[RMDB]
Structure probing data (2A3 and DMS) for a 177-nucleotide construct. DMS adducts were read by reverse transcription with MarathonRT. The 2A3 profile rests on 842 reads. The DMS profile rests on 603 reads. Conditions: 150 mM KOAc, 10 mM MgCl2 and 150 mM bicine (pH 8.5), 24 C. For 2A3 the reverse transcriptase was SuperScript II with manganese.
RNA sequence: GGGAACGACUCGAGUAGAGUCGAAAAGUGAAUAUGGUGACCUAGAGACGUGCACGAAGCUCAACGACUGUCAAAAGCUACUUUUUUACGCACUCAGACAGCAGGUGGAGCACGGCCCGUGCACCAGGCUAGCCUGAGGGUUCGCCCUCAGGCUAGCAAAAGAAACAACAACAACAAC
Reactivity to 2A3 in 0.01 (KOAc 150mM, MgCl2 10mM, bicine 150mM(pH8.5), 24C), signal-to-noise 1, nucleotides 027 to 126: g110u070g060a080a040u150a110u170g030g040u030g070a070c020c010u050a030g010a010g000a200c030g020u030g000c000a040c160g080a130a010g000c000u010c010a000a020c060g160a120c010u000g000u010c000a040a040a040a040g020c020u030a050c010u080u120u080u040u040u020a060c060g000c000a060c000u110c040a010g000a010c060a010g040c010a010g070g280u090g030g000a000g070c010a000c020g160g000c030c020c030g010u020g000c000a000c000c010a020g090
Reactivity to DMS in 0.01 (KOAc 150mM, MgCl2 10mM, bicine 150mM(pH8.5), 24C), signal-to-noise 1, nucleotides 027 to 126: g060u000g000a070a050u000a020u000g040g000u010g010a070c090c090u010a150g020a090g000a010c210g080u010g000c030a030c050g010a080a280g030c000u000c030a090a060c030g010a020c030u010g030u030c020a060a040a220a090g030c090u000a170c150u000u000u100u000u000u020a190c030g050c060a080c070u030c160a260g000a000c000a010g000c030a030g000g060u000g000g000a020g020c020a040c100g010g000c040c090c030g000u000g000c000a020c000c140a040g000